[RMDB]
RNA sequence: GGGAACGACUCGAGUAGAGUCGAAAAUGGGCGAUCGCUCGCUGUUUUUGUGGCUGGCUUUCAGCGGGCUGGAGGAGCCGGGAGCGGAGGCGGAAGACCGAGCCAAAAACGUCAGCCGAGGCCGGGCAAUAUCGUGGACUGUUCGCAGUCCACGAAAACUCCAAUAGUUCUUCGGAACUAUUGGAGUAAAAGAAACAACAACAACAAC
Reactivity to 2A3 in 0.01 (KOAc 150mM, MgCl2 10mM, bicine 150mM(pH8.5), 24C), signal-to-noise 1, nucleotides 027 to 156: u110g030g010g000c050g060a120u070c110g010c040u000c020g000c040u030g050u030u050u030u040u120g070u050g040g000c020u020g000g010c000u000u080u050c000a000g010c000g020g000g000c040u030g040g010a050g050g010a050g030c040c020g020g010g010a040g000c050g010g050a060g030g000c070g030g000a020a000g020a020c030c040g020a020g050c010c030a000a060a000a000a050c030g010u000c000a010g000c020c000g010a020g020g000c000c030g030g010g030c000a060a040u060a080u190c000g000u000g000g010a000c000u000g060u020u090c220g020c070a000g010u000c000c000a000c000g000a000a000a000